Record summary: Chemical mapping of a 177-nucleotide RNA with DMS and 2A3. For DMS, 21,044 sequencing reads were counted. Source: RMDB library OK2TRN, as collected in RNAgym.
RNA sequence: GGGAACGACUCGAGUAGAGUCGAAAAUGCAAAAGGACCAAAUGGUGCAACAGUUACAGCAUGUGCAACAGGUACAAACUCAAUCGGAGAAGCAUUUAAAAUUGUGCAACGCGGUGAUGCAGAUGCACUUAUAAAGGAGUUUCGACUCCUUUAUAAGAAAAGAAACAACAACAACAAC
Reactivity to DMS in 0.01 (KOAc 150mM, MgCl2 10mM, bicine 150mM(pH8.5), 24C), signal-to-noise 9, nucleotides 027 to 126: u000g010c060a070a060a110a110g010g010a110c030c030a060a090a120u010g010g020u000g010c030a050a060c060a070g010u000u010a080c140a060g010c060a060u010g010u000g010c050a040a040c110a040g000g010u000a040c090a070a070a090c050u000c050a050a060u010c130g010g010a070g010a090a130g010c030a030u000u000u010a040a050a080a090u010u000g010u000g010c020a030a110c110g010c040g000g020u010g010a090u010g000c020a060g010a090u000g000c030a080
Reactivity to 2A3 in 0.01 (KOAc 150mM, MgCl2 10mM, bicine 150mM(pH8.5), 24C), signal-to-noise 7, nucleotides 027 to 126: u080g000c010a000a000a050a100g060g020a020c000c020a060a050a120u160g050g000u040g020c020a070a040c010a090g040u080u100a030c010a040g030c040a050u070g030u040g060c010a070a030c010a060g040g030u070a050c030a040a120a060c020u030c050a040a140u110c050g080g010a050g010a060a010g000c010a000u020u060u220a080a120a050a080u160u120g020u010g020c020a040a030c030g010c020g070g060u090g030a050u110g010c010a010g020a090u070g010c020a020